RNA sequence: GGGAACGACUCGAGUAGAGUCGAAAAGAUAUGGAAUAUACUCCUUUUGACGAGCCCUUUCGGAAACGAAAGAGCGCUCGAUAAGGAGAUAUUCCUAAGUCAAAAGGAUAGGCUUCGGCCUAUCCAAGUUAGUACUAAGGUUCGCCUUAGUACUAACAAAAGAAACAACAACAACAAC
Reactivity to 2A3 in 0.01 (KOAc 150mM, MgCl2 10mM, bicine 150mM(pH8.5), 24C), signal-to-noise 7, nucleotides 027 to 126: g010a010u020a010u070g000g030a020a010u050a020u160a300c020u030c020c030u060u090u150u300g300a300c070g000a000g000c000c010c000u000u010u010c000g000g010a010a010a010c010g010a000a010a000g030a040g020c300g000c020u000c020g020a050u080a030a000g000g000a000g000a000u000a000u000u000c000c000u000a020a000g010u000c020a000a020a130a230g010g010a000u010a000g010g010c030u080u130c300g090g000c010c000u000a000u000c000c000a000a000
Reactivity to DMS in 0.01 (KOAc 150mM, MgCl2 10mM, bicine 150mM(pH8.5), 24C), signal-to-noise 6, nucleotides 027 to 126: g000a020u000a190u010g000g000a010a010u000a010u000a180c000u000c000c000u000u000u010u000g020a230c100g010a020g000c000c040c000u000u000u000c000g020g000a040a030a050c000g000a010a010a010g000a080g020c270g040c010u000c000g020a070u010a010a010g000g010a010g000a020u000a000u000u000c000c000u000a010a080g000u000c030a110a080a170a160g000g000a010u000a010g010g010c000u000u010c260g040g010c000c000u000a000u000c000c000a010a030
Background:
This 177-nucleotide RNA was probed chemically with 2A3 and DMS. For 2A3, 21,073 sequencing reads were counted. Values cover nucleotides 27 to 126. For DMS, 11,260 sequencing reads were counted. For DMS the reverse transcriptase was MarathonRT.